[RMDB]
RNA sequence: GGGAACGACUCGAGUAGAGUCGAAAAAGCGACUCCGAUUACGAUCGGAGUCGCAAGAGAUAGAGGUGCUUGGCCAGCUCUCUGGUCUUGUUAACAAGCCUCAUCAUAAAGAUGGAGAUGAUAAGAACGAUUCGAUGUCGUUCGCGACAUCGAAUCGAAAAGAAACAACAACAACAAC
Reactivity to 2A3 in 0.01 (KOAc 150mM, MgCl2 10mM, bicine 150mM(pH8.5), 24C), signal-to-noise 1, nucleotides 027 to 126: a000g010c000g000a020c000u070c000c000g000a000u000u080a170c300g020a000u030c000g000g000a060g010u000c000g040c000a000a000g010a000g000a000u020a040g030a020g090g000u110g090c170u060u030g100g000c000c000a000g000c120u070c010u010c000u000g000g010u000c000u030u010g000u180u220a100a160c070a140a000g030c000c020u000c000a000u000c070a070u110a120a060a000g000a020u110g110g000a020g020a040u130g060a020u040a300a010g090a040a070